[RMDB]
RNA sequence: GGGAACGACUCGAGUAGAGUCGAAAAUUUGCCAGAUGCUAUGGACCAAUAGUCAAUGGCACAGUGUCAGGGUUUGGGAGGCUUUUUGUGCCACUCUAUAGCAACCUAAUAUCAUCAUCAAUAGCACUGGAAGACUCUGAAACAAUAUCUAGAUCACCUUCCAAAUGCAGUUCGCUGCAUUUGGAAGAAAAGAAACAACAACAACAAC
Reactivity to 2A3 in 0.01 (KOAc 150mM, MgCl2 10mM, bicine 150mM(pH8.5), 24C), signal-to-noise 2, nucleotides 027 to 156: u080u060u100g090c000c000a020g170a220u080g020c010u020a010u070g040g060a080c010c150a090a000u030a040g030u080c050a020a030u030g000g000c040a000c040a030g070u050g050u040c070a050g010g020g010u010u090u090g120g000g010a020g000g000c000u130u140u010u130u150g070u030g000c010c000a040c010u070c020u030a050u060a070g080c020a020a050c010c010u060a090a040u150a040u190c100a030u020c020a000u020c020a020a170u020a050g010c000a000c000u000g000g020a090a010g020a000c010u000c000u050g040a020a050a020c010a070a100u050a050u170c060u070a020g010a150u070c030a040c020
The data come from the RNA Mapping Database (RMDB), library OK3TST. Structure probing data (2A3) for a 207-nucleotide construct. The reactions ran in a buffer of 150 mM KOAc, 10 mM MgCl2 and 150 mM bicine (pH 8.5), at 24 C. Reactivities are given for positions 27 through 156.